An RNA of 177 nucleotides, treated with 2A3 and DMS and read out base by base.
The 2A3 profile rests on 25,451 reads.
Values are in units of 0.01, from 0 to 300, in steps of 10.
RNA sequence: GGGAACGACUCGAGUAGAGUCGAAAACAGCAAGGCCAGGCCACAUGGCCAGCGUGGUCUCCCCGACUCCACGUGGCCUGGGCCGAGUCUGGGCCCCCGGAGGGAGAGGGGGUGCCCCUGGGAGACGCCUAAUGAAGUUAUUCGUAACUUCAUUAGGAAAAGAAACAACAACAACAAC
Reactivity to 2A3 in 0.01 (KOAc 150mM, MgCl2 10mM, bicine 150mM(pH8.5), 24C), signal-to-noise 7, nucleotides 027 to 126: c020a000g040c030a030a090g010g000c010c030a020g010g010c000c000a030c010a040u030g020g000c040c010a000g010c010g020u100g030g080u090c080u120c040c000c000c000g110a130c020u020c020c000a010c000g000u000g000g010c010c040u070g020g060g000c000c010g000a000g020u030c010u020g030g070g020c030c000c000c000c010g070g120a120g060g100g030a100g030a100g060g010g000g020g010u020g010c010c000c010c020u080g030g010g010a030g020a010c040g050
Reactivity to DMS in 0.01 (KOAc 150mM, MgCl2 10mM, bicine 150mM(pH8.5), 24C), signal-to-noise 9, nucleotides 027 to 126: c030a040g010c050a160a240g000g010c010c010a060g010g010c000c000a020c020a050u000g000g010c140c260a020g010c050g010u010g010g010u000c040u000c030c010c010c010g010a120c030u000c010c010a020c030g020u000g000g000c000c010u000g010g020g010c000c010g000a240g010u010c010u000g010g000g010c030c010c010c030c020g010g010a110g010g000g010a110g000a190g000g010g010g010g020u000g000c020c010c010c060u010g010g010g000a050g010a040c080g010